[RMDB]
RNA sequence: GGGAACGACUCGAGUAGAGUCGAAAAUGGUAUGAUUAAGAAGCUCGACAACGAUGUUCUUAAUGGUAUCAUUUCUAACGCUAGGAAUGGUUGUAUACCUCUUAGUGUCAUCCCACUGUGUGCUUCAUCGUAUCUUCAGGUUCGCCUGAAGAUACGAAAAAGAAACAACAACAACAAC
Reactivity to 2A3 in 0.01 (KOAc 150mM, MgCl2 10mM, bicine 150mM(pH8.5), 24C), signal-to-noise 2, nucleotides 027 to 126: u000g020g000u000a000u040g110a020u160u000a000a000g010a010a020g100c010u010c000g080a100c040a220a110c040g010a010u110g040u010u010c010u010u000a010a000u000g060g010u000a010u000c000a000u000u000u050c040u030a060a010c010g000c020u000a000g000g070a180a170u300g030g120u060u080g180u210a100u110a120c020c000u000c000u000u010a000g000u000g010u020c010a040u000c000c060c000a010c030u070g000u010g060u090g100c020u040u050c020a000
Reactivity to DMS in 0.01 (KOAc 150mM, MgCl2 10mM, bicine 150mM(pH8.5), 24C), signal-to-noise 2, nucleotides 027 to 126: u000g020g020u000a020u010g000a030u000u010a010a000g010a040a020g020c070u000c000g040a210c300a200a200c020g020a030u010g000u000u000c000u010u010a000a010u000g000g010u000a000u000c000a000u000u000u010c220u010a100a010c020g010c030u000a020g010g010a040a080u010g040g000u000u010g030u000a180u010a010c010c000u000c000u000u000a020g010u000g000u010c100a050u000c000c000c010a160c190u000g040u000g010u000g020c060u000u010c140a150